[RMDB]
RNA sequence: GGGAACGACUCGAGUAGAGUCGAAAACCAUAAACAAAUAGUAUUUUUGAUAUGACAGCCUAAUAGAUGAUAUGAUUAUUUCAGUUGUCUUUGUUUGGAUAUCACAUUAACUGAUUGUAAAAUCAGUCUUGUAGAAAGAGUUCGCUCUUUCUACAAGAAAAGAAACAACAACAACAAC
Reactivity to DMS in 0.01 (KOAc 150mM, MgCl2 10mM, bicine 150mM(pH8.5), 24C), signal-to-noise 4, nucleotides 027 to 126: c020c000a140u040a070a110a140c130a060a090a090u040a080g010u010a080u010u000u000u010u000g010a060u000a020u010g000a050c130a040g000c040c050u000a040a030u010a040g010a020u010g000a020u000a040u010g000a020u010u010a090u000u010u000c030a030g000u000u000g000u010c010u010u000u010g010u000u000u000g010g010a050u010a090u000c040a030c130a050u000u000a060a060c000u010g000a020u000u000g000u040a050a040a020a020u000c000a010g000u010
Reactivity to 2A3 in 0.01 (KOAc 150mM, MgCl2 10mM, bicine 150mM(pH8.5), 24C), signal-to-noise 9, nucleotides 027 to 126: c020c000a040u190a020a140a030c090a010a100a050u170a050g150u070a280u040u150u030u070u070g020a020u020a020u050g090a070c020a010g040c020c030u150a180a120u090a110g020a010u020g030a010u100a130u200g030a040u090u140a150u120u250u020c010a000g010u010u010g000u010c000u060u070u080g110u040u090u040g020g000a020u020a010u030c050a050c040a150u110u110a070a020c010u000g000a030u020u030g100u160a090a100a010a050u010c000a000g020u010